RNA sequence: GGGAACGACUCGAGUAGAGUCGAAAACCCGCUACCCGCGUCGCAGGACUGAUCAGCGGCGAAUAUGAUAUCAUUACCACGCUCACGCCGGACGAUAUCCAGCUCGUAAACAGCUACCCCGACCUGGGGGCGCGCAUCCGUUCGCGGAUGCGCGCCCAAAAGAAACAACAACAACAAC
Reactivity to 2A3 in 0.01 (KOAc 150mM, MgCl2 10mM, bicine 150mM(pH8.5), 24C), signal-to-noise 1, nucleotides 027 to 126: c000c000c020g000c010u130a090c000c000c110g130c000g070u070c000g000c110a040g000g060a300c170u020g020a040u220c000a000g000c000g020g000c000g000a000a010u110a070u200g060a130u000a060u240c000a000u000u130a030c010c010a100c040g040c000u060c020a070c070g040c000c000g070g000a030c000g000a000u000a070u000c000c000a000g000c000u040c000g070u080a030a110a030c030a000g000c000u180a260c000c000c010c000g090a070c000c000u010g000g020
The record gives the reactivity of an RNA of 177 nucleotides to 2A3. 2A3 adducts were read by reverse transcription with SuperScript II with manganese. Reactivities are given for positions 27 through 126. The RNA was probed in 150 mM KOAc, 10 mM MgCl2 and 150 mM bicine (pH 8.5) at 24 C.